[RMDB]
An RNA of 207 nucleotides, treated with 2A3 and DMS and read out base by base. Reactivities are given for positions 27 through 156. The data come from the RNA Mapping Database (RMDB), library M2RFPK.
RNA sequence: GGGAACGACUCGAGUAGAGUCGAAAAGCUGAAAAUGAUUUAUGGGUAGUGGAAUAGGUUAACCGUAAGACCUUUGGUUGAAAAACUAUGCAAUUAAGCCUCAGAUAUUUUAUCUUUGGUUACGGGAAAAAUCAUUUACCGUUCGCGGUAAAUGAAAGUCUAGAAGAAAGUUCGCUUUCUUCUAGACAAAAGAAACAACAACAACAAC
Reactivity to 2A3 in 0.01 (KOAc 150mM, MgCl2 10mM, bicine 150mM(pH8.5), 24C), signal-to-noise 3, nucleotides 027 to 156: g000c010u020g030a040a020a070a090u110g030a080u120u140u270a090u130g030g020g050u020a040g030u030g050g030a070a120u030a110g010g010u040u030a070a040c010c000g010u020a040a020g050a100c020c000u040u050u070g040g000u010u060g020a010a010a050a020a020c050u050a060u130g010c040a010a070u110u070a180a000g000c010c010u010c000a000g030a030u040a100u120u180u160u130a010u040c000u020u040u040g010g000u010u040a000c010g010g040g000a050a130a020a010a030u020c000a000u000u010u000a000c010c010g010u010u020c140g020c020g040g010u000a000a000a000u000g000a000a000a010
Reactivity to DMS in 0.01 (KOAc 150mM, MgCl2 10mM, bicine 150mM(pH8.5), 24C), signal-to-noise 1, nucleotides 027 to 156: g020c010u000g000a050a010a060a150u000g010a070u000u000u000a030u010g000g010g020u000a110g010u020g010g000a110a110u020a030g030g020u010u000a070a170c000c050g000u000a080a120g010a050c030c020u000u000u020g010g020u010u000g000a040a100a100a100a080c020u000a110u000g000c040a050a120u010u010a050a180g000c010c030u020c060a030g020a070u000a060u020u000u000u000a030u000c020u010u000u000g010g040u000u000a020c060g010g000g020a020a040a070a080a120u000c020a020u000u000u000a010c020c010g020u000u000c290g020c020g000g040u000a000a000a000u010g010a000a030a060

Conditions: 150 mM KOAc, 10 mM MgCl2 and 150 mM bicine (pH 8.5), 24 C. The 2A3 profile rests on 2,331 reads.